[RMDB]
RNA sequence: GGGAACGACUCGAGUAGAGUCGAAAAGAUAUGGAGGCGCCUAGCAUCGCGAAACUACCGGUCGGAAACGACCGUGUAGGAGAUGGGUCUCCUAAGUCAAAGAAGGUCGGGUUCGCCCGACCUUCAACAACAAGCGUAAGUUCGCUUACGCUUGUUGAAAAGAAACAACAACAACAAC
Reactivity to 2A3 in 0.01 (KOAc 150mM, MgCl2 10mM, bicine 150mM(pH8.5), 24C), signal-to-noise 1, nucleotides 027 to 126: g000a010u000a000u050g020g000a040g000g100c160g300c180c050u140a110g300c050a050u000c000g000c060g160a210a000a000c000u000a010c010c010g000g000u000c000g050g000a010a000a000c000g010a000c010c000g000u060g000u000a000g020g000a020g020a000u030g020g020g020u050c010u050c000c010u000a020a020g000u010c020a080a020a240g030a020a000g000g000u000c000g030g060g040u050u250c210g090c000c000c000g000a000c000c060u000u010c000a000a010
Reactivity to DMS in 0.01 (KOAc 150mM, MgCl2 10mM, bicine 150mM(pH8.5), 24C), signal-to-noise 2, nucleotides 027 to 126: g000a030u000a030u020g000g000a010g000g000c070g000c070c070u020a150g020c120a060u000c020g010c180g000a110a110a110c000u000a000c000c000g010g010u000c000g010g000a030a010a060c010g000a000c000c000g020u000g020u010a010g000g010a020g000a010u010g010g010g010u000c010u010c000c000u000a000a080g000u000c020a090a110a180g010a020a000g020g010u000c000g000g010g000u010u020c290g000c020c000c000g000a000c000c000u010u000c010a050a110

Source: RMDB library TTRDEL, as collected in RNAgym. Chemical mapping of a 177-nucleotide RNA with 2A3 and DMS. For DMS the reverse transcriptase was MarathonRT. The RNA was probed in 150 mM KOAc, 10 mM MgCl2 and 150 mM bicine (pH 8.5) at 24 C. For DMS, 1,736 sequencing reads were counted.